This 177-nucleotide RNA was probed chemically with 2A3 and DMS. DMS adducts were read by reverse transcription with MarathonRT. 2A3 adducts were read by reverse transcription with SuperScript II with manganese. For 2A3, 1,424 sequencing reads were counted. The reactions ran in a buffer of 150 mM KOAc, 10 mM MgCl2 and 150 mM bicine (pH 8.5), at 24 C.
[RMDB]
RNA sequence: GGGAACGACUCGAGUAGAGUCGAAAACUGAUGCUUAAGGAGCCUCACAUCAGUGACACACUGCCCCAUCCCUCCCUGGUGGUCAGCGACACUGAGUGGCUCUGUGAUCCUCCACUGGGCUUGGGACGUCGUACUUUCGGUUCGCCGAAAGUACGACAAAAGAAACAACAACAACAAC
Reactivity to 2A3 in 0.01 (KOAc 150mM, MgCl2 10mM, bicine 150mM(pH8.5), 24C), signal-to-noise 1, nucleotides 027 to 126: c010u040g010a040u160g010c100u170u130a110a060g100g000a010g060c010c000u060c020a050c000a190u000c000a020g010u020g130a020c040a000c000a010c150u040g000c040c000c000c000a060u120c010c000c000u000c020c000c020u000g030g000u050g020g010u090c050a000g000c030g060a020c000a000c000u010g030a000g040u060g070g030c010u010c010u020g020u000g000a130u020c030c030u010c050c000a020c090u040g030g000g060c000u060u040g010g040g000a020c080
Reactivity to DMS in 0.01 (KOAc 150mM, MgCl2 10mM, bicine 150mM(pH8.5), 24C), signal-to-noise 2, nucleotides 027 to 126: c010u000g000a080u010g020c070u000u010a120a110g030g000a020g010c020c020u010c060a110c050a100u000c000a010g010u010g000a110c190a180c120a040c070u000g000c040c020c010c020a130u010c020c030c030u000c070c000c030u000g010g040u000g000g020u000c070a040g020c100g030a150c020a020c010u000g020a030g020u010g020g000c010u000c010u010g000u000g020a040u010c030c050u000c030c030a090c050u010g040g020g000c060u000u010g010g030g000a090c170